Source information: Chemical mapping of a 207-nucleotide RNA with 2A3. The RNA was probed in 150 mM KOAc, 10 mM MgCl2 and 150 mM bicine (pH 8.5) at 24 C. It was measured as part of the RMDB library OK3TST. For 2A3 the reverse transcriptase was SuperScript II with manganese. For 2A3, 375 sequencing reads were counted.
RNA sequence: GGGAACGACUCGAGUAGAGUCGAAAAGCAUGUUUAUGUGAACCUAAGCAUGAAUGUCAGUGACUGUAGAUUAGAAGUACUGAUUAUAGCAUCGGCUGCUUGGUGUUCACUUUAUUUGCAUCUGUGAGUUUCCAACAAGCCCUAAGUUUACUGACAACAUUAUCGCGUCCUUCGGGACGCGAUAAUGAAAAGAAACAACAACAACAAC
Reactivity to 2A3 in 0.01 (KOAc 150mM, MgCl2 10mM, bicine 150mM(pH8.5), 24C), signal-to-noise 1, nucleotides 027 to 156: g000c020a000u020g010u010u180u000a130u120g020u020g010a000a040c000c000u000a010a010g000c040a030u180g100a300a010u170g020u050c000a010g020u090g290a210c030u110g140u260a060g040a220u030u090a060g080a130a000g080u020a050c000u010g000a020u050u090a040u140a070g010c010a070u120c180g100g000c000u000g000c030u000u000g000g000u210g000u080u000c000a000c030u000u040u040a020u000u040u010g000c020a020u020c030u000g090u000g110a160g030u000u050u040c010c010a060a060c040a080a000g050c080c000c080u170a200a160g000u000u060u050a230c030u020g050a030c030a080a000